[RMDB]
RNA sequence: GGGAACGACUCGAGUAGAGUCGAAAACGCGGCGCUGCUCGGCGGAGCGCUCCGCAUCCUCUUUGAACAUUGGAACGUCGGCAAAGCCCAGCUCGGGGAGGGUGGGCCGAUUCUCAAGCGGCGAGAGCCUCAGGAUGCUCUUCGGAGCAUCCUGAGGAAAAGAAACAACAACAACAAC
Reactivity to 2A3 in 0.01 (KOAc 150mM, MgCl2 10mM, bicine 150mM(pH8.5), 24C), signal-to-noise 4, nucleotides 027 to 126: c060g000c010g000g000c010g020c070u290g000c000u050c020g150g030c150g120g030a010g000c020g000c010u010c020c010g030c000a030u000c000c020u060c070u060u100u160g110a120a090c070a130u040u080g020g040a100a000c040g020u000c020g040g000c070a150a060a040g010c000c000c010a050g050c060u070c080g020g000g040g030a080g020g040g030u100g010g040g000c000c000g030a040u110u000c040u010c000a090a070g030c000g020g000c060g070a040g010a000g060
Reactivity to DMS in 0.01 (KOAc 150mM, MgCl2 10mM, bicine 150mM(pH8.5), 24C), signal-to-noise 1, nucleotides 027 to 126: c110g030c060g050g000c050g050c000u010g040c000u000c000g010g050c300g030g040a000g070c020g040c020u000c000c000g030c050a040u010c050c010u000c040u030u230u000g000a130a030c160a120u000u010g010g000a070a060c130g010u020c040g070g020c070a020a110a170g040c010c030c010a000g070c100u000c010g010g000g000g000a080g030g070g000u040g010g000g000c050c030g000a040u000u020c020u000c070a040a020g040c110g040g000c000g000a030g000a160g000

Chemical mapping of a 177-nucleotide RNA with 2A3 and DMS. For 2A3, 2,253 sequencing reads were counted. The RNA was probed in 150 mM KOAc, 10 mM MgCl2 and 150 mM bicine (pH 8.5) at 24 C. DMS adducts were read by reverse transcription with MarathonRT. For 2A3 the reverse transcriptase was SuperScript II with manganese. For DMS, 1,456 sequencing reads were counted.